RNA sequence: GGGAACGACUCGAGUAGAGUCGAAAAGGACAUAUAGUAUUCUUGUAUUCUACCGAAUACCCAAGAGAUGCAAUACAAAAGAGUAAGACUAAUUUGUAAACCAUCUUACUUAAAAUAUGUAACAAUACCUGGUAAUAUUAUUCGUAAUAUUACCAGGAAAAGAAACAACAACAACAAC
Reactivity to DMS in 0.01 (KOAc 150mM, MgCl2 10mM, bicine 150mM(pH8.5), 24C), signal-to-noise 3, nucleotides 027 to 126: g020g000a080c020a030u020a090u000a140g040u010a140u010u000c040u000u000g020u000a030u020u000c030u000a090c300c190g000a040a020u000a100c040c160c100a040a150g000a050g000a010u000g010c070a080a300u000a030c010a020a000a050a140g020a020g000u010a050a070g050a300c080u000a050a100u000u000u000g000u000a020a050a300c300c020a030u000c010u000u000a090c040u000u000a040a060a050a070u010a020u000g000u000a030a150c040a050a130u000a090
Reactivity to 2A3 in 0.01 (KOAc 150mM, MgCl2 10mM, bicine 150mM(pH8.5), 24C), signal-to-noise 3, nucleotides 027 to 126: g030g000a020c030a020u210a000u070a120g060u060a110u060u060c010u010u060g040u040a030u080u000c020u060a130c020c050g000a020a020u040a050c020c040c020a040a010g020a020g000a040u020g030c030a060a050u010a110c010a010a060a020a020g080a000g040u050a070a030g020a040c010u050a060a120u070u060u120g100u100a060a030a020c020c000a020u000c000u000u040a090c010u040u040a050a050a000a010u170a050u100g030u080a100a030c020a060a090u160a160
Structure probing data (DMS and 2A3) for a 177-nucleotide construct. Values cover nucleotides 27 to 126. For DMS, 1,963 sequencing reads were counted. For 2A3 the reverse transcriptase was SuperScript II with manganese. The RNA was probed in 150 mM KOAc, 10 mM MgCl2 and 150 mM bicine (pH 8.5) at 24 C. For 2A3, 3,471 sequencing reads were counted.